[RMDB]
RNA sequence: GGGAACGACUCGAGUAGAGUCGAAAAACUGGUCCUGCUGGUGCUGAAGCGCUGCCGGUCUUCGCCCUGCGCGUCGGCCAGGUAGCAUUUGACCAUGGUGUCGUAGUCCAGCCCCUCCGCGGCGUGUCCCUUGGCGCGCAGCUUGCCCUUGGAGGUGCCAUCAUUGUUCAUUCGUGAACAAUGAUGGAAAAGAAACAACAACAACAAC
Reactivity to 2A3 in 0.01 (KOAc 150mM, MgCl2 10mM, bicine 150mM(pH8.5), 24C), signal-to-noise 3, nucleotides 027 to 156: a010c040u080g040g050u070c010c010u020g010c040u050g000g060u120g010c050u120g090a090a020g070c040g010c100u000g000c000c000g020g010u000c000u010u020c010g010c000c020c110u270g030c130g000c000g110u020c010g010g000c010c030a230g010g000u000a010g000c010a020u040u040u120g030a050c010c040a170u250g080g020u140g010u080c060g050u050a030g040u010c010c000a010g000c030c010c000c000u030c010c020g010c000g000g000c010g000u020g030u110c080c120c050u070u300g010g000c000g000c000g000c010a010g000c000u070u190g060c020c010c020u020u080g030g010a040g040g010u030g040
Reactivity to DMS in 0.01 (KOAc 150mM, MgCl2 10mM, bicine 150mM(pH8.5), 24C), signal-to-noise 1, nucleotides 027 to 156: a050c020u020g000g000u000c040c000u000g040c020u010g000g000u010g010c020u000g010a060a100g010c070g050c020u000g000c010c010g000g000u000c010u010u000c020g010c040c040c180u000g000c090g030c020g000u000c140g000g030c040c030a050g130g030u000a040g000c040a070u010u000u000g000a080c020c060a190u000g000g010u000g020u000c050g000u000a110g000u010c030c010a100g020c050c020c010c020u010c020c030g030c030g020g040c000g010u010g010u010c030c130c110u000u010g010g000c020g010c050g010c010a030g000c010u000u000g010c040c020c040u030u000g050g000a110g030g030u000g000

Structure probing data (2A3 and DMS) for a 207-nucleotide construct.
For 2A3, 2,701 sequencing reads were counted.
The data come from the RNA Mapping Database (RMDB), library OK3TST.
The DMS profile rests on 4,116 reads.
Conditions: 150 mM KOAc, 10 mM MgCl2 and 150 mM bicine (pH 8.5), 24 C.
2A3 adducts were read by reverse transcription with SuperScript II with manganese.
For DMS the reverse transcriptase was MarathonRT.